Background:
Chemical mapping of a 177-nucleotide RNA with 2A3 and DMS. For DMS the reverse transcriptase was MarathonRT. Reactivities are given for positions 27 through 126.
RNA sequence: GGGAACGACUCGAGUAGAGUCGAAAAGGCGGCAGCAGUGGCGGUGGUACGCUCAGCGAGUCCCAAGAGACGACGGCGUCGGAGUUUGUGAUGGAACUACGGGACGCCCUUAAGCAAACGAUGGCGGCAUGCGCGCAGGAUUCGUCCUGCGCGCAUGAAAAGAAACAACAACAACAAC
Reactivity to 2A3 in 0.01 (KOAc 150mM, MgCl2 10mM, bicine 150mM(pH8.5), 24C), signal-to-noise 2, nucleotides 027 to 126: g010g000c050g040g030c000a000g000c000a010g080u030g080g000c010g000g060u060g000g050u100a030c050g010c020u020c000a000g050c060g000a030g020u050c040c000c000a020a020g130a000g000a020c100g010a010c020g000g040c000g000u000c030g000g050a020g000u000u030u120g120u020g140a200u250g110g010a020a040c040u120a160c120g030g040g000a040c040g060c020c000c000u060u000a030a000g070c010a010a000a100c100g010a050u010g020g000c090g000g000
Reactivity to DMS in 0.01 (KOAc 150mM, MgCl2 10mM, bicine 150mM(pH8.5), 24C), signal-to-noise 1, nucleotides 027 to 126: g020g010c090g000g020c000a150g000c080a080g050u030g010g000c030g000g040u000g030g000u040a160c120g000c000u020c070a070g030c000g000a120g010u000c060c000c000a160a160g000a030g000a160c020g000a210c070g000g000c070g080u040c050g000g030a240g000u000u000u010g000u010g000a230u000g000g000a080a020c100u010a050c040g020g000g000a080c100g000c100c020c100u000u000a100a110g000c230a050a090a050c150g000a060u080g030g000c050g000g120
Conditions: 150 mM KOAc, 10 mM MgCl2 and 150 mM bicine (pH 8.5), 24 C.